[RMDB]
RNA sequence: GGGAACGACUCGAGUAGAGUCGAAAAACUUACAACUGGUUUGACUUUUCAAACUGUGCGGCCUGGCAAUUUUAACCAAGACUUCUAUGAUUUCGUGGUAUCUAAAGGUUUCUUUAAGGAGGGCUCUGAACCCAUGCGUUCGCGCAUGGGAAAAGAAACAACAACAACAAC
Reactivity to DMS in 0.01 (KOAc 150mM, MgCl2 10mM, bicine 150mM(pH8.5), 24C), signal-to-noise 3, nucleotides 027 to 129: a150c160u000u060a130c050a190a130c280u030g000g050u030u000u060g000a160c240u100u050u040u000c030a040a000a160c050u090g020u010g050c120g070g000c000c000u030g010g020c100a000a000u060u090u060u030a000a000c090c000a070a100g020a040c110u000u050c050u030a000u070g000a070u010u010u010c010g000u010g000g110u050a020u000c150u020a040a090a070g030g020u060u000u000c000u000u000u000a190a180g000g000a070g040g000g000c010u010c030u010g000a100a150
Reactivity to 2A3 in 0.01 (KOAc 150mM, MgCl2 10mM, bicine 150mM(pH8.5), 24C), signal-to-noise 2, nucleotides 027 to 129: a000c030u150u230a000c010a110a000c030u050g050g000u000u030u030g100a100c020u000u000u200u160c020a020a050a020c000u000g010u000g050c010g040g000c000c000u060g000g020c010a020a040u040u030u010u120a100a000c000c010a080a000g010a040c010u110u070c090u200a250u150g110a300u070u170u080c090g030u100g000g050u050a040u020c030u170a100a090a000g250g000u020u020u020c000u040u010u010a000a000g020g030a000g000g000g040c060u000c020u060g000a100a050